[RMDB]
RNA sequence: GGGAACGACUCGAGUAGAGUCGAAAACGCAAGGAACGGAUCUUCACCGCCAUGACGAGUCAGAUCCUCUCGACCUACUUUACCUUUGGCUACAUGGACCCCAACCAAGAGAUCUUACUCAACACUGGAAAUAGUUUUUCUUCGGAAAAACUAUUUCAAAAGAAACAACAACAACAAC
Reactivity to 2A3 in 0.01 (KOAc 150mM, MgCl2 10mM, bicine 150mM(pH8.5), 24C), signal-to-noise 4, nucleotides 027 to 126: c040g020c070a050a050g050g010a120a070c070g030g020a040u010c020u060u070c100a040c030c020g000c020c010a140u110g050a080c040g020a020g030u030c020a010g020a050u020c000c000u010c020u000c000g070a050c010c000u020a060c040u120u090u100a090c010c000u070u110u100g040g000c010u020a030c070a080u050g030g040a060c000c000c000c000a020a030c010c010a080a010g010a000g000a080u020c010u080u090a060c020u030c030a040a030c020a030c100u090g060
Reactivity to DMS in 0.01 (KOAc 150mM, MgCl2 10mM, bicine 150mM(pH8.5), 24C), signal-to-noise 4, nucleotides 027 to 126: c080g000c130a080a080g000g000a090a130c130g000g010a060u010c060u010u010c100a080c070c030g000c040c070a080u010g010a160c090g010a070g000u010c130a030g010a050u010c020c010u010c120u010c050g010a090c030c010u010a030c030u000u010u000a070c040c020u000u010u010g020g010c040u000a060c070a070u010g020g010a150c020c020c010c040a050a130c060c070a060a070g000a070g000a050u000c040u000u010a090c040u000c030a080a070c160a090c160u000g020